[RMDB]
RNA sequence: GGGAACGACUCGAGUAGAGUCGAAAAGACAUUUCAUAUGGGGAAGGUUCAGAGACUAAAUGGGUGUGGGUGCGUUACUCUUGAAGUGACAAGCUUAAGAUAUAGUCCGGCUUCAGUAGAAAUGCUGGAGAUCAGGUUCCACCUGUGAUUAAAACGGCGGAGAUUAUUACUUCGGUAAUAAUCUCCGAAAAGAAACAACAACAACAAC
Reactivity to 2A3 in 0.01 (KOAc 150mM, MgCl2 10mM, bicine 150mM(pH8.5), 24C), signal-to-noise 2, nucleotides 027 to 156: g030a000c020a050u080u150u080c030a040u120a120u240g010g010g000g010a030a040g020g000u090u120c090a030g030a030g010a070c040u090a030a100a070u130g030g010g010u050g010u020g040g030g000u010g000c010g040u020u020a030c010u010c000u060u160g070a140a020g010u030g060a010c020a100a010g000c020u110u080a060a020g010a030u020a040u050a190g070u020c010c040g010g020c000u000u000c010a010g000u000a000g040a040a070a000u100g010c000u000g000g010a000g000a020u040c010a020g010g000u060u050c010c000a030c000c000u010g020u020g050a070u110u110a020a120a040a010c020g050g000
Reactivity to DMS in 0.01 (KOAc 150mM, MgCl2 10mM, bicine 150mM(pH8.5), 24C), signal-to-noise 1, nucleotides 027 to 156: g000a110c040a080u000u000u000c050a120u010a100u010g000g000g000g020a080a080g050g010u000u000c080a130g020a140g020a150c070u010a040a070a130u010g020g020g030u010g040u000g030g010g050u000g010c190g000u000u000a010c030u010c050u000u000g010a070a060g010u010g010a060c030a070a240g000c020u000u000a040a040g000a100u000a180u000a110g010u000c010c040g000g020c030u000u010c000a040g070u000a020g010a110a130a140u000g010c000u000g000g000a020g020a050u010c020a100g040g000u000u000c060c020a050c040c000u000g020u010g010a140u000u000a030a030a080a050c070g020g040

The record gives the reactivity of an RNA of 207 nucleotides to 2A3 and DMS. For 2A3, 1,251 sequencing reads were counted. Conditions: 150 mM KOAc, 10 mM MgCl2 and 150 mM bicine (pH 8.5), 24 C. For DMS the reverse transcriptase was MarathonRT. As a SHAPE reagent, 2A3 marks flexible, mostly unpaired nucleotides at the ribose 2'-OH. The data come from the RNA Mapping Database (RMDB), library ARCHII.